This 177-nucleotide RNA was probed chemically with DMS and 2A3. It was measured as part of the RMDB library OK2TRN.

[RMDB]
RNA sequence: GGGAACGACUCGAGUAGAGUCGAAAACACUUGAACCCGGGAGGUAGAGGUUGCAAUAAGUCGAGAUUGUGCCAUGGCACUCCAGCCUGGCAGCGGAGUGAGACUCUAUCACACACACACACACAAACUUAGUCUUUUCAUUCGUGAAAAGACUAAGAAAAGAAACAACAACAACAAC
Reactivity to DMS in 0.01 (KOAc 150mM, MgCl2 10mM, bicine 150mM(pH8.5), 24C), signal-to-noise 4, nucleotides 027 to 126: c080a070c100u000u000g020a110a120c040c020c020g020g000g020a050g020g010u010a060g010a050g000g010u000u010g030c050a060a050u000a050a080g000u000c080g010a110g000a100u000u000g010u000g010c020c020a060u010g030g000c030a050c130u010c080c060a150g000c000c010u010g000g010c060a080g010c070g000g000a070g030u000g020a120g000a100c040u000c050u000a050u000c050a060c050a050c090a050c060a070c060a060c090a010c070a060c130a060a070a140
Reactivity to 2A3 in 0.01 (KOAc 150mM, MgCl2 10mM, bicine 150mM(pH8.5), 24C), signal-to-noise 1, nucleotides 027 to 126: c060a030c050u080u100g050a080a080c030c000c010g000g020g000a080g010g020u020a010g030a010g050g050u090u110g000c000a020a040u100a160a050g070u070c040g020a030g020a030u060u100g040u050g020c000c050a050u140g040g030c010a030c060u000c010c020a020g000c000c010u030g020g000c010a010g000c010g020g000a020g020u040g020a070g010a040c010u010c000u000a050u040c000a050c000a000c000a020c000a000c030a000c000a000c000a000c000a030a020a030